[RMDB]
RNA sequence: GGGAACGACUCGAGUAGAGUCGAAAAACAAGCUCCAGUCUCAGAUUGUAACUGGCCUUUUUAAAGAUUGCUCUAGAGAAACUUCUGGCCUCUCACCUGCUUAUGCACCAACAUAUGUUAGUGUUGAGUUAUAACUGAGGUUCGCCUCAGUUAUAACAAAAGAAACAACAACAACAAC
Reactivity to 2A3 in 0.01 (KOAc 150mM, MgCl2 10mM, bicine 150mM(pH8.5), 24C), signal-to-noise 3, nucleotides 027 to 126: a000c010a020a040g000c010u020c030c000a020g060u000c010u000c060a110g030a220u100u140g040u070a050a020c040u040g040g000c000c010u170u100u070u070u130a080a210a030g030a030u040u110g020c000u040c050u070a060g010a020g020a140a130a070c010u070u060c030u060g060g000c040c000u000c000u000c000a020c000c010u020g030c020u040u060a040u100g000c000a040c040c010a020a030c020a040u100a030u170g040u000u030a090g000u040g030u090u050g010a050
Reactivity to DMS in 0.01 (KOAc 150mM, MgCl2 10mM, bicine 150mM(pH8.5), 24C), signal-to-noise 3, nucleotides 027 to 126: a090c080a090a100g010c070u000c030c020a040g000u000c050u000c040a080g000a090u000u000g010u000a090a020c070u000g000g000c270c010u000u000u010u010u020a050a110a120g000a090u000u000g000c040u000c020u000a090g020a120g000a100a060a090c110u000u010c040u000g010g000c070c020u000c020u010c050a080c030c040u010g000c090u000u000a040u010g010c030a040c040c030a040a050c040a110u000a050u000g020u010u010a040g030u000g000u000u000g000a180